[RMDB]
RNA sequence: GGGAACGACUCGAGUAGAGUCGAAAAUUUGCUACACUCCUAUAGAUGAGAUACCCUAUAAGAGUUUCUCUGAUAGUGGUUGCAUUCUUCCAUCUGAGUGCACUAUGUUUAGGGAUGCAGAGGGCCGCCUCAUCUAUUACUUCGGUAAUAGAUGAGGAAAAGAAACAACAACAACAAC
Reactivity to 2A3 in 0.01 (KOAc 150mM, MgCl2 10mM, bicine 150mM(pH8.5), 24C), signal-to-noise 2, nucleotides 027 to 126: u020u000u040g000c010u030a030c020a030c070u020c010c010u030a030u040a040g060a060u040g000a020g020a120u070a050c000c010c000u030a050u010a110a030g020a000g000u030u060u010c000u010c010u010g020a020u030a080g060u040g040g060u110u110g030c000a000u070u000c000u140u010c100c000a170u060c070u090g020a020g010u000g000c000a000c010u020a010u030g040u030u030u040a010g000g020g000a020u060g030c010a020g020a030g040g030g000c010c010g010
Reactivity to DMS in 0.01 (KOAc 150mM, MgCl2 10mM, bicine 150mM(pH8.5), 24C), signal-to-noise 3, nucleotides 027 to 126: u010u000u020g010c020u000a110c130a060c010u010c020c030u000a050u000a030g010a070u010g000a150g000a110u000a060c030c200c010u000a040u010a080a070g000a040g010u010u010u010c000u000c000u000g010a080u010a110g030u000g010g010u020u010g010c030a030u000u000c020u010u000c120c160a040u010c130u000g000a050g020u000g010c000a030c040u000a010u000g000u000u000u000a020g000g010g000a060u020g000c010a040g000a050g010g000g020c070c070g000

Conditions: 150 mM KOAc, 10 mM MgCl2 and 150 mM bicine (pH 8.5), 24 C.
This 177-nucleotide RNA was probed chemically with 2A3 and DMS.
It was measured as part of the RMDB library 15KREP.
For DMS, 2,767 sequencing reads were counted.